The record gives the reactivity of an RNA of 207 nucleotides to 2A3. The RNA was probed in 150 mM KOAc, 10 mM MgCl2 and 150 mM bicine (pH 8.5) at 24 C. Values cover nucleotides 27 to 156. It was measured as part of the RMDB library M2RFPK. The 2A3 profile rests on 1,084 reads.

[RMDB]
RNA sequence: GGGAACGACUCGAGUAGAGUCGAAAAACACCGGACUAGGCGUACGCGCCUAGUCGGGUGAGGGUCAGACGAGCAGACACCCAUUGAAGUUCUGCUCUACCGUUAAAAGGAAGUAAACCAUCAUGAAAGAAGUGCGCUUGGUUCGCCAAGCGCACAACAUGUCGAUAUAGUUCGCUAUAUCGACAUGAAAAGAAACAACAACAACAAC
Reactivity to 2A3 in 0.01 (KOAc 150mM, MgCl2 10mM, bicine 150mM(pH8.5), 24C), signal-to-noise 2, nucleotides 027 to 156: a000c000a030c000c000g060g000a020c000u000a000g000g000c010g020u050a040c240g060c000g000c080c000u000a000g010u000c000g070g050g000u030g000a100g020g000g010u050c010a020g010a160c060g000a070g000c000a000g000a000c000a020c020c010c060a060u010u300g100a010a000g010u050u000c000u000g000c010u010c000u000a000c000c010g030u060u090a040a080a110a130g070g090a070a080g040u170a070a080a010c090c060a070u180c040a050u170g250a070a040a120g150a120a010g000u010g000c000g010c010u000u010g000g060u040u120c200g000c040c000a000a000g040c000g000c000a020c000a000a000